[RMDB]
RNA sequence: GGGAACGACUCGAGUAGAGUCGAAAAAGGGGAUUUCUCCUGCACCUUUAUCAAUGGAGGAACUCGACUUUGCUGUGGGUCCCAAAGGGACCUUAGGUGCAGACAGUUACCGGCGGUGAAGUGUGAGCAUAGGUUCGUGUCUUCGGACACGAACCAAGAACCUAAGAUACUUCGGUAUCUUAGGUUCAAAAGAAACAACAACAACAAC
Reactivity to 2A3 in 0.01 (KOAc 150mM, MgCl2 10mM, bicine 150mM(pH8.5), 24C), signal-to-noise 4, nucleotides 027 to 156: a000g030g010g000g010a060u070u080u010c020u010c000c000u020g000c030a080c010c010u060u140u120a120u080c050a060a080u150g020g000a040g010g060a040a040c010u020c030g050a020c040u040u030u040g010c010u030g010u110g010g000g000u020c000c000c010a120a100a080g010g010g000a000c000c000u030u090a040g000g010u010g010c000a030g080a190c030a020g010u040u050a020c000c010g020g000c020g030g000u020g000a010a010g050u070g040u050g090a030g030c080a120u100a200g010g000u000u000c000g000u000g000u000c010u020u070c200g030g010a000c000a000c000g000a000a000c000c000a000a000
Reactivity to DMS in 0.01 (KOAc 150mM, MgCl2 10mM, bicine 150mM(pH8.5), 24C), signal-to-noise 3, nucleotides 027 to 156: a040g000g010g010g020a190u000u000u000c020u000c010c010u000g000c040a080c040c020u000u000u020a100u020c100a090a290u030g010g010a170g000g010a070a050c020u000c020g010a050c050u000u000u000g030c030u010g020u010g000g010g000u000c010c010c020a080a150a180g050g010g020a010c010c000u000u000a010g040g020u000g020c060a140g010a110c110a100g020u000u000a080c010c010g000g020c120g010g020u000g000a020a060g020u000g010u000g010a080g040c050a100u000a150g020g010u000u000c000g020u010g010u000c030u000u020c300g070g010a020c000a010c010g000a010a000c010c000a020a070
The data come from the RNA Mapping Database (RMDB), library M2RFPK. An RNA of 207 nucleotides, treated with 2A3 and DMS and read out base by base. Reactivities are given for positions 27 through 156. Conditions: 150 mM KOAc, 10 mM MgCl2 and 150 mM bicine (pH 8.5), 24 C.